Record summary
An RNA of 177 nucleotides, treated with DMS and 2A3 and read out base by base. For DMS the reverse transcriptase was MarathonRT. The 2A3 profile rests on 2,244 reads. 2A3 adducts were read by reverse transcription with SuperScript II with manganese.

RNA sequence: GGGAACGACUCGAGUAGAGUCGAAAAAAGCGAUUACCUAAGCUCAGCGAUUGUCAAACAGAACGUAGAUUAACUGCCGCUAAUCACUCCACAAUGUUGAGCCGACUCUCAACGGCUACUGCAUUACCACGCUAGUAUUGUUCGCAAUACUAGCGUGAAAAGAAACAACAACAACAAC
Reactivity to DMS in 0.01 (KOAc 150mM, MgCl2 10mM, bicine 150mM(pH8.5), 24C), signal-to-noise 2, nucleotides 027 to 126: a080a040g010c070g020a150u000u010a100c020c010u020a120a130g000c010u000c010a100g030c040g000a090u000u000g000u000c090a050a070a050c110a050g010a090a060c190g040u000a020g010a090u000u000a070a100c050u000g000c030c040g040c040u020a030a030u020c030a050c040u030c070c060a100c150a020a010u020g020u000u000g010a050g040c030c000g000a080c110u000c080u010c140a070a110c040g020g000c030u000a080c020u000g000c010a040u000u000a110c150
Reactivity to 2A3 in 0.01 (KOAc 150mM, MgCl2 10mM, bicine 150mM(pH8.5), 24C), signal-to-noise 2, nucleotides 027 to 126: a000a010g080c060g020a060u080u110a060c000c000u020a050a030g000c010u000c080a020g000c010g110a090u010u140g050u070c060a070a080a060c060a130g060a060a010c020g030u080a030g030a110u070u070a040a040c030u010g060c050c010g000c020u010a070a000u050c010a020c040u010c040c010a060c040a050a020u030g000u030u020g040a000g000c000c010g070a050c040u040c000u010c060a050a060c000g000g000c020u120a150c030u050g000c000a020u030u030a060c060